[RMDB]
An RNA of 177 nucleotides, treated with 2A3 and DMS and read out base by base. Values are in units of 0.01, from 0 to 300, in steps of 10. For DMS the reverse transcriptase was MarathonRT. Conditions: 150 mM KOAc, 10 mM MgCl2 and 150 mM bicine (pH 8.5), 24 C.

RNA sequence: GGGAACGACUCGAGUAGAGUCGAAAAUCUUUCCAAUGGGUAUUGUUCCAAAUUCCAAACAUCGAUUGAGUCUAAAUGACUGGGCCAAAUAUAUCCGUGGUUCAAAUAUUCAGCCGGAAAAGUCAAACAAUCAGAAUCAGUUCGCUGAUUCUGAUUGAAAAGAAACAACAACAACAAC
Reactivity to 2A3 in 0.01 (KOAc 150mM, MgCl2 10mM, bicine 150mM(pH8.5), 24C), signal-to-noise 2, nucleotides 027 to 126: u010c010u000u000u010c000c000a020a060u050g000g020g010u060a070u030u110g000u050u070c020c010a000a090a080u160u000c020c010a150a080a080c040a170u120c060g120a070u010u120g010a060g020u000c020u050a150a210a110u120g050a030c060u050g000g020g000c010c030a070a140a000u090a010u010a050u110c050c010g030u040g000g030u070u070c010a080a070a000u040a060u060u050c010a010g130c090c040g010g030a060a070a020a020g060u070c090a060a030a030
Reactivity to DMS in 0.01 (KOAc 150mM, MgCl2 10mM, bicine 150mM(pH8.5), 24C), signal-to-noise 2, nucleotides 027 to 126: u010c060u000u000u020c010c010a090a110u010g000g000g000u000a010u000u000g020u000u010c000c020a080a090a120u000u010c100c030a070a060a170c160a040u020c100g010a070u020u000g000a060g000u000c010u000a030a100a100u000g010a040c030u000g020g000g000c060c020a020a070a110u010a070u010a060u000c070c080g010u010g010g000u000u000c030a010a100a040u000a040u000u000c020a020g010c180c140g000g010a050a030a070a090g000u000c090a060a100a170